[RMDB]
RNA sequence: GGGAACGACUCGAGUAGAGUCGAAAACGUUGCCGAAGAUGCUCAUCAAGAGGUCCGUCCCGACAGCUCUACACUGAGGACGUGCCAAAUCUGCAGCUUGUCCAAGAGCCGGCAGCCGACGCGCUGCCCUUAGGAGUCGGUUCGCCGACUCCUAAGGAAAAGAAACAACAACAACAAC
Reactivity to 2A3 in 0.01 (KOAc 150mM, MgCl2 10mM, bicine 150mM(pH8.5), 24C), signal-to-noise 3, nucleotides 027 to 126: c030g050u030u070g060c010c020g020a050a010g070a070u150g050c040u050c070a130u060c060a120a040g060a080g120g000u020c040c020g020u020c000c010c000g130a120c030a020g020c010u000c040u130a050c090a050c090u050g040a070g070g000a010c010g000u030g030c020c010a090a160a120u040c040u070g020c020a030g030c000u040u090g020u000c020c000a110a040g020a030g080c030c020g050g000c010a010g010c020c010g190a130c070g060c030g020c020u020g030c000
Reactivity to DMS in 0.01 (KOAc 150mM, MgCl2 10mM, bicine 150mM(pH8.5), 24C), signal-to-noise 6, nucleotides 027 to 126: c100g000u000u000g010c020c020g020a130a090g000a080u010g010c040u010c040a100u010c110a100a120g010a240g010g000u000c150c020g000u010c000c010c050g000a090c060a050g000c020u010c070u000a080c100a190c060u020g000a150g010g000a030c030g010u000g010c030c040a050a120a080u000c050u000g010c060a070g010c030u000u000g000u000c060c080a090a120g010a100g020c060c090g010g000c020a020g010c020c040g000a100c180g000c160g030c010u000g000c030
The record gives the reactivity of an RNA of 177 nucleotides to 2A3 and DMS. Reactivities are rounded to 0.1 and cut off at 0 and 3.